The record gives the reactivity of an RNA of 177 nucleotides to 2A3 and DMS. The RNA was probed in 150 mM KOAc, 10 mM MgCl2 and 150 mM bicine (pH 8.5) at 24 C. For 2A3 the reverse transcriptase was SuperScript II with manganese. For DMS the reverse transcriptase was MarathonRT.

RNA sequence: GGGAACGACUCGAGUAGAGUCGAAAAUAAUCUGACUGGCUAUGAGGUCAGACCUCAUGCGCAUCUCAUAUCAUGUCAGUCAUGGGGUGCAGAGACCUGGGUUAAUUCACAAACUCAGAAUUGUGAAGAUAGUAGACUAUUUCGAUGGUUUGCUAUCAAAAGAAACAACAACAACAAC
Reactivity to 2A3 in 0.01 (KOAc 150mM, MgCl2 10mM, bicine 150mM(pH8.5), 24C), signal-to-noise 9, nucleotides 027 to 126: u110a000a060u030c040u030g050a040c010u030g080g060c100u130a040u190g070a020g020g000u010c000a000g010a010c000c000u000c000a000u010g000c000g000c000a010u000c010u010c050a070u060a090u140c080a060u090g110u020c050a020g030u020c020a030u030g010g010g000g000u020g010c030a010g020a010g010a070c000c010u000g010g020g000u020u040a020a020u130u060c030a010c020a010a020a000c010u010c040a010g090a030a150u080u050g050u030g020a030a030
Reactivity to DMS in 0.01 (KOAc 150mM, MgCl2 10mM, bicine 150mM(pH8.5), 24C), signal-to-noise 9, nucleotides 027 to 126: u030a090a100u020c020u000g000a240c030u000g000g010c080u020a080u010g010a010g010g000u000c000a010g000a010c010c000u000c000a000u000g000c010g000c000a000u000c010u000c100a050u010a100u020c170a060u020g010u030c100a070g010u020c070a030u000g000g000g000g020u000g010c050a090g000a090g000a130c100c000u000g000g000g010u000u010a050a110u010u010c050a020c040a020a000a030c040u010c070a090g000a100a120u020u010g010u010g010a110a090